The record gives the reactivity of an RNA of 177 nucleotides to DMS and 2A3. The reactions ran in a buffer of 150 mM KOAc, 10 mM MgCl2 and 150 mM bicine (pH 8.5), at 24 C. Values cover nucleotides 27 to 126. Source: RMDB library TTRINS, as collected in RNAgym.
RNA sequence: GGGAACGACUCGAGUAGAGUCGAAAAGAUAUGGACGUCAAGAUGAGUCGCUCUUCCGAUGAAAUGCUUAUAUCGGAAACGAUAUAAGCAUGGAGGAAGAGAACUACGAUUGAGACGUCCUAAGUCACAUACGACAGUCGUUCGCGACUGUCGUAUGAAAAGAAACAACAACAACAAC
Reactivity to DMS in 0.01 (KOAc 150mM, MgCl2 10mM, bicine 150mM(pH8.5), 24C), signal-to-noise 2, nucleotides 027 to 126: g100a050u040a300u010g000g000a000c030g040u000c010a050a300g000a080u000g000a070g000u010c300g000c010u000c000u000u000c000c000g010a130u050g050a060a210a010u000g000c000u010u000a000u010a000u010c010g010g000a090a070a100c040g010a000u000a000u000a000a030g010c010a000u000g050g010a040g020g010a020a010g020a010g000a010a040c040u000a050c110g000a030u010u000g010a300g000a020c000g000u000c000c000u020a010a000g000u000c050a130
Reactivity to 2A3 in 0.01 (KOAc 150mM, MgCl2 10mM, bicine 150mM(pH8.5), 24C), signal-to-noise 1, nucleotides 027 to 126: g050a020u100a020u190g020g000a020c000g030u010c010a000a010g070a070u300g040a010g180u100c150g150c090u000c000u000u000c000c000g300a300u140g070a020a010a000u000g010c000u000u000a000u020a010u010c000g000g050a000a010a030c000g010a000u010a000u010a020a000g000c000a000u000g000g000a020g000g000a000a000g000a000g000a000a010c000u230a140c100g190a030u000u120g010a070g000a020c000g000u000c000c000u000a000a000g010u010c000a030